This 177-nucleotide RNA was probed chemically with DMS and 2A3.
2A3 adducts were read by reverse transcription with SuperScript II with manganese.
DMS adducts were read by reverse transcription with MarathonRT.
Conditions: 150 mM KOAc, 10 mM MgCl2 and 150 mM bicine (pH 8.5), 24 C.
It was measured as part of the RMDB libraries RFM100 and RFMREP.
[RMDB]
RNA sequence: GGGAACGACUCGAGUAGAGUCGAAAAGCAAAUUAGAGUGUUCAAAGCAGACGAUGUUUGAAUACAUUAGCAUGGAAUAAUAAUGUUGUCGUAUGACAUCCAUUGGAUUGUGUUAUAUGAUGUGGAUAGGAAACAGGUAAUUCGUUACCUGUUUCCUAAAAGAAACAACAACAACAAC
Reactivity to DMS in 0.01 (KOAc 150mM, MgCl2 10mM, bicine 150mM(pH8.5), 24C), signal-to-noise 2, nucleotides 027 to 126: g000c050a060a060a130u030u010a080g010a120g050u000g000u000u000c030a030a040a060g000c030a040g010a190c230g000a110u000g030u000u000u010g000a030a040u000a020c010a050u040u000a080g000c150a100u010g020g040a130a060u020a060a010u000a010a050u010g000u010u010g010u000c010g010u000a000u010g010a010c020a020u010c090c010a140u020u020g020g000a180u000u000g030u020g010u000u000a020u000a040u010g000a040u010g020u010g000g020a140u010
Reactivity to 2A3 in 0.01 (KOAc 150mM, MgCl2 10mM, bicine 150mM(pH8.5), 24C), signal-to-noise 3, nucleotides 027 to 126: g030c000a000a010a150u200u150a150g030a030g060u060g010u040u080c050a060a030a070g070c030a030g070a180c170g030a120u080g020u020u130u100g040a000a020u030a030c010a090u030u140a040g040c080a050u100g050g110a060a090u110a200a000u040a050a140u260g030u080u040g010u090c020g010u080a010u010g010a000c000a000u000c010c050a060u020u170g140g010a100u210u000g050u000g030u060u000a050u010a020u050g080a030u100g030u050g070g000a050u000